The data come from the RNA Mapping Database (RMDB), library PDB130.
Structure probing data (DMS and 2A3) for a 207-nucleotide construct.
For 2A3 the reverse transcriptase was SuperScript II with manganese.
The reactions ran in a buffer of 150 mM KOAc, 10 mM MgCl2 and 150 mM bicine (pH 8.5), at 24 C.
High 2A3 reactivity points to a flexible backbone, as in loops and unpaired stretches.

[RMDB]
RNA sequence: GGGAACGACUCGAGUAGAGUCGAAAAAAGGUAGCGAAAUUCCUUGUCGGGUAAGUUCCGACCCGCACGAAAGGCGUAACGAUCUGGGCACUGUCUCGGAGAGAGGCUCGGUGAAAUAGACAUGUCUGUGAAGAUGCGGACUACCUGCACCUGGACAGCCGUACUAUUAGUUCGCUAAUAGUACGGCAAAAGAAACAACAACAACAAC
Reactivity to DMS in 0.01 (KOAc 150mM, MgCl2 10mM, bicine 150mM(pH8.5), 24C), signal-to-noise 2, nucleotides 027 to 156: a040a000g030g010u000a020g000c020g000a060a070a160u000u000c060c000u000u010g050u000c010g010g010g030u030a110a110g020u000u000c010c050g030a030c000c010c040g000c010a090c040g010a090a040a060g020g000c040g020u000a030a100c060g010a090u000c020u010g000g020g030c020a040c050u000g010u010c000u000c010g020g020a250g010a230g020a090g010g000c020u000c000g160g060u000g000a060a040a160u000a120g020a110c070a090u000g020u010c020u010g010u020g040a110a090g020a040u000g160c030g000g000a140c050u000a010c020c030u010g000c040a110c020c010u020g040g000a100c070a210
Reactivity to 2A3 in 0.01 (KOAc 150mM, MgCl2 10mM, bicine 150mM(pH8.5), 24C), signal-to-noise 3, nucleotides 027 to 156: a010a020g050g000u040a010g000c010g070a030a080a120u080u020c020c020u060u070g030u020c010g000g000g000u060a100a050g080u160u010c020c000g000a020c000c000c000g050c000a020c040g100a100a050a010g010g000c040g050u070a120a060c050g020a080u010c010u030g010g000g020c010a040c110u110g050u020c020u040c080g080g000a160g010a030g000a030g110g000c070u070c030g010g000u030g010a050a090a010u110a040g030a010c030a050u080g010u000c020u000g200u070g060a060a040g060a060u060g000c010g010g030a010c000u030a020c000c000u030g030c010a080c000c030u010g030g030a030c020a020